[RMDB]
RNA sequence: GGGAACGACUCGAGUAGAGUCGAAAAGAUAUGGACAUCCUGAGGGAGCUGGGUGGUCGGAAACGACCACUCAGCAUCGAUCUCAGGGAUGUCCUAAGUCAAACCUCUCAGGUUCGCCUGAGAGGAACUUGUAUUUAGAGUUCGCUCUAAAUACAAGAAAAGAAACAACAACAACAAC
Reactivity to DMS in 0.01 (KOAc 150mM, MgCl2 10mM, bicine 150mM(pH8.5), 24C), signal-to-noise 5, nucleotides 027 to 126: g000a020u000a180u010g000g010a030c000a120u000c000c000u000g000a020g010g000g000a050g040c000u000g010g000g020u000g000g010u000c000g010g000a030a050a110c000g010a010c000c000a000c000u000c000a010g020c000a060u000c250g010a050u010c000u000c000a040g000g010g010a040u010g000u000c000c000u000a000a060g000u000c020a130a130a220c000c000u000c000u000c000a010g010g010u000u020c290g020c010c000u000g000a020g000a000g010g010a010a020
Reactivity to 2A3 in 0.01 (KOAc 150mM, MgCl2 10mM, bicine 150mM(pH8.5), 24C), signal-to-noise 4, nucleotides 027 to 126: g020a010u040a010u110g000g000a000c010a030u050c010c000u010g010a020g010g060g060a250g000c000u000g000g010g000u010g010g020u000c000g000g010a010a050a000c010g000a000c000c000a000c000u000c000a000g010c010a000u020c010g010a030u000c010u010c010a020g060g000g010a000u040g010u000c000c000u000a030a000g010u010c020a030a040a300c010c000u000c000u000c010a000g080g070u060u130c270g110c100c000u000g000a000g000a010g000g010a000a010
An RNA of 177 nucleotides, treated with DMS and 2A3 and read out base by base. Conditions: 150 mM KOAc, 10 mM MgCl2 and 150 mM bicine (pH 8.5), 24 C. 2A3 adducts were read by reverse transcription with SuperScript II with manganese. For DMS the reverse transcriptase was MarathonRT. Reactivities are rounded to 0.1 and cut off at 0 and 3. Source: RMDB library TTRDES, as collected in RNAgym. For 2A3, 19,686 sequencing reads were counted.